[RMDB]
RNA sequence: GGGAACGACUCGAGUAGAGUCGAAAAUAAAAGAGUGCGUGGUAGCACAAACCAGACCAAUGAUAAGUGCAUGGUCGCACAAGUACAGCUUCGCCUGUACAAAGCGAACAACAACUACAACAAAAAAGUAUGUAUGUUGCUUCGGCAACAUACAUACAAAAGAAACAACAACAACAAC
Reactivity to 2A3 in 0.01 (KOAc 150mM, MgCl2 10mM, bicine 150mM(pH8.5), 24C), signal-to-noise 1, nucleotides 027 to 126: u160a000a020a000a000g200a000g010u020g000c010g000u010g010g060u110a050g010c000a000c030a040a080a080c010c040a070g070a020c000c080a090a110u170g160a130u120a280a010g000u000g100c020a040u050g070g010u000c000g030c000a070c020a110a060g000u050a000c000a000g020c020u060u250c150g010c010c010u010g020u030a020c010a000a050a010g000c010g000a020a010c030a020a000c000a010a010c020u150a070c080a090a010c020a020a130a000a040a000a000
Reactivity to DMS in 0.01 (KOAc 150mM, MgCl2 10mM, bicine 150mM(pH8.5), 24C), signal-to-noise 1, nucleotides 027 to 126: u000a030a100a030a170g020a140g090u000g000c000g000u000g000g000u020a120g000c000a000c050a030a090a090c010c010a080g010a140c020c010a060a080u000g020a070u000a040a170g010u000g000c020a170u000g010g050u010c010g020c040a060c300a100a120g020u000a040c000a000g010c030u010u010c300g030c280c020u000g000u000a000c000a090a150a080g000c060g020a010a000c010a040a070c090a080a130c030u000a030c080a000a030c080a000a010a020a020a060a230